[RMDB]
RNA sequence: GGGAACGACUCGAGUAGAGUCGAAAACAUUAGGCUUGCCACACAGCGCAGCACAUUUUAGUUGCUUAGAGCAAGAGGCCAAGUUAGCAGCUUAGGCAGCAAGUUUUAGAGCAUUCAGCGCAGCAGCGCUUAGAGAGCAAGUUCACAGCCAAGCAGCCUAUGAAGUGAAGUUCGCUUCACUUCAUAGAAAAGAAACAACAACAACAAC
Reactivity to 2A3 in 0.01 (KOAc 150mM, MgCl2 10mM, bicine 150mM(pH8.5), 24C), signal-to-noise 7, nucleotides 027 to 156: c050a040u100u150a040g020g030c000u000u020g000c020c000a040c020a020c050a060g010c020g010c030a010g110c020a030c030a120u140u190u090u180a090g030u060u050g010c000u030u040a030g000a000g040c040a080a050g010a040g090g030c010c010a040a010g090u190u040a040g060c090a000g000c030u040u090a130g010g000c010a020g030c020a040a050g020u030u030u040u060a130g030a000g020c020a030u050u150c070a060g030c050g000c090a110g010c020a040g000c030g010c040u040u070a060g040a000g000a010g130c010a030a000g010u140u160c060a070c040a050g040c020c010a070a040g050c030a010g000c060
Reactivity to DMS in 0.01 (KOAc 150mM, MgCl2 10mM, bicine 150mM(pH8.5), 24C), signal-to-noise 4, nucleotides 027 to 156: c070a180u000u000a110g020g060c010u000u000g040c020c010a190c100a100c200a070g000c030g020c030a130g050c030a160c060a130u000u010u010u010a120g030u000u000g010c000u000u010a090g010a060g000c030a050a200g030a090g000g030c020c030a040a060g000u000u000a160g000c040a230g010c010u000u000a060g050g010c020a060g010c010a030a240g000u000u000u000u010a100g020a000g040c020a120u010u010c060a090g010c060g020c010a130g040c120a130g030c020g000c010u000u000a100g010a170g000a140g010c020a050a070g010u000u000c050a110c030a050g000c030c020a040a080g030c040a140g020c070